[RMDB]
RNA sequence: GGGAACGACUCGAGUAGAGUCGAAAAGGGAGAACCGAGCAGAGGCAUAGCGAACUGCGCACGGCGAAGCCUUGAGGGAAGGCCGUAGGACCCGGGUUCGAUUCCCGGCUGCUCCACCGAAGGGCCAAUCCCGCUAUAAUUUCGAUUAUAGCGGGAUAAAAGAAACAACAACAACAAC
Reactivity to DMS in 0.01 (KOAc 150mM, MgCl2 10mM, bicine 150mM(pH8.5), 24C), signal-to-noise 9, nucleotides 027 to 126: g020g000g000a090g010a150a100c040c050g000a100g010c040a070g000a110g010g020c030a090u020a140g010c080g010a120a120c050u000g000c030g010c080a100c040g000g020c020g000a190a300g000c010c010u010u010g010a190g010g000g000a120a100g000g000c020c020g000u010a100g020g000a110c110c020c000g000g020g020u010u010c180g010a300u040u020c000c000c000g010g000c180u020g010c060u000c020c040a160c050c050g000a140a090g010g000g010c020c070a110
Reactivity to 2A3 in 0.01 (KOAc 150mM, MgCl2 10mM, bicine 150mM(pH8.5), 24C), signal-to-noise 6, nucleotides 027 to 126: g050g020g000a100g020a070a020c030c020g000a010g020c020a010g010a040g070g000c060a090u140a090g050c040g080a100a050c020u040g030c040g020c050a050c030g030g010c030g040a050a010g030c000c010u040u060g050a080g010g010g030a040a080g030g010c020c030g030u030a050g030g070a080c010c000c010g000g000g000u040u050c030g030a060u040u070c000c000c000g000g000c010u040g000c010u010c000c000a040c000c010g040a050a040g020g000g000c000c000a010